This 207-nucleotide RNA was probed chemically with 2A3 and DMS. For DMS the reverse transcriptase was MarathonRT. For 2A3, 3,132 sequencing reads were counted. The RNA was probed in 150 mM KOAc, 10 mM MgCl2 and 150 mM bicine (pH 8.5) at 24 C.

[RMDB]
RNA sequence: GGGAACGACUCGAGUAGAGUCGAAAAACGCGGAGUACGCUCCGCGACAACACUUCUUUCGACCCGCUAACCGGGACCUAUGGGUCGUUAAAUUACGUCUCUAUCUUACUCACAUAACAUCGCACAAAAAACGUGGUUCGGUUCGCCGAACCACGAACAAUUGUAUACCCUUCGGGGUAUACAAUUGAAAAGAAACAACAACAACAAC
Reactivity to 2A3 in 0.01 (KOAc 150mM, MgCl2 10mM, bicine 150mM(pH8.5), 24C), signal-to-noise 5, nucleotides 027 to 156: a000c010g000c000g000g000a010g010u040a020c180g050c060u000c000c000g000c010g020a000c010a060a040c040a010c060u150u110c020u070u210u130c010g000a010c000c010c000g030c140u100a040a020c080c030g030g010g000a020c000c010u050a110u200g000g010g000u000c000g070u030u060a020a050a050u180u060a030c020g010u010c000u000c020u030a100u080c050u080u150a100c030u110c070a060c030a160u230a180a050c030a110u210c080g060c150a070c090a040a080a030a050a060a040c040g000u000g000g000u000u000c000g010g010u030u030c120g030c080c000g010a000a000c020c000a000c000g000a000a000
Reactivity to DMS in 0.01 (KOAc 150mM, MgCl2 10mM, bicine 150mM(pH8.5), 24C), signal-to-noise 1, nucleotides 027 to 156: a130c050g030c000g010g000a090g030u000a170c300g040c010u010c000c000g010c020g040a070c070a050a170c050a110c100u000u000c090u000u010u010c000g010a060c010c010c020g030c050u010a160a080c080c040g010g010g020a020c030c060u030a080u000g000g020g000u000c010g020u010u020a030a080a030u030u010a050c010g020u000c000u000c030u000a040u000c050u000u000a070c030u000c020a100c050a090u000a040a100c080a090u000c060g000c110a110c130a010a040a070a070a080a090c000g050u000g000g000u000u000c030g030g000u010u000c230g010c000c000g020a040a020c020c000a000c020g030a020a030